[RMDB]
RNA sequence: GGGAACGACUCGAGUAGAGUCGAAAAAGGCGAAGGCAGUCCCGUACAUACGCCUGAUGCUGACGCGCUCAUUGCAAGCUCCACUGCUAACCAAGGAGUAGUGACCAAAGGAUUCGAGAGUGCUUCAAAUGAUGAAGAGUCUGUUAGUGGGGCUGAGCAUGACUCUGCAAUUCGUUGCAGAGUCAUGAAAAGAAACAACAACAACAAC
Reactivity to 2A3 in 0.01 (KOAc 150mM, MgCl2 10mM, bicine 150mM(pH8.5), 24C), signal-to-noise 3, nucleotides 027 to 156: a010g080g000c050g020a010a020g090g000c050a000g020u050c050c010c000g040u100a060c060a090u170a060c070g020c000c000u020g020a020u140g000c030u030g020a020c030g040c010g010c010u020c030a120u080u230g030c060a050a010g010c000u000c010c020a020c000u050g060c020u070a150a110c070c040a090a090g060g020a020g020u040a000g030u040g050a030c000c030a070a050a080g040g020a060u040u140c070g000a020g010a030g150u110g070c000u010u010c040a150a180a200u160g090a030u140g020a030a070g020a010g100u050c040u150g050u260u150a010g010u010g020g000g010g000c000u020g010a030g000
Reactivity to DMS in 0.01 (KOAc 150mM, MgCl2 10mM, bicine 150mM(pH8.5), 24C), signal-to-noise 3, nucleotides 027 to 156: a060g000g010c010g030a200a150g010g020c010a060g000u010c010c030c050g020u020a150c100a090u020a060c040g030c000c010u000g040a230u000g010c050u020g050a180c060g030c000g010c030u010c050a100u010u000g030c050a110a100g020c000u000c010c050a020c020u010g000c040u000a060a090c080c210a040a160g040g000a110g010u000a070g010u010g010a150c080c050a100a060a140g010g000a130u000u000c070g000a140g010a090g030u000g030c040u000u000c040a030a060a130u000g010a100u010g000a090a110g000a120g020u000c030u010g020u000u000a070g000u000g020g010g030g010c030u000g000a110g000
Conditions: 150 mM KOAc, 10 mM MgCl2 and 150 mM bicine (pH 8.5), 24 C.
The record gives the reactivity of an RNA of 207 nucleotides to 2A3 and DMS.
It was measured as part of the RMDB library OK3TST.
The 2A3 profile rests on 1,372 reads.
For DMS, 3,954 sequencing reads were counted.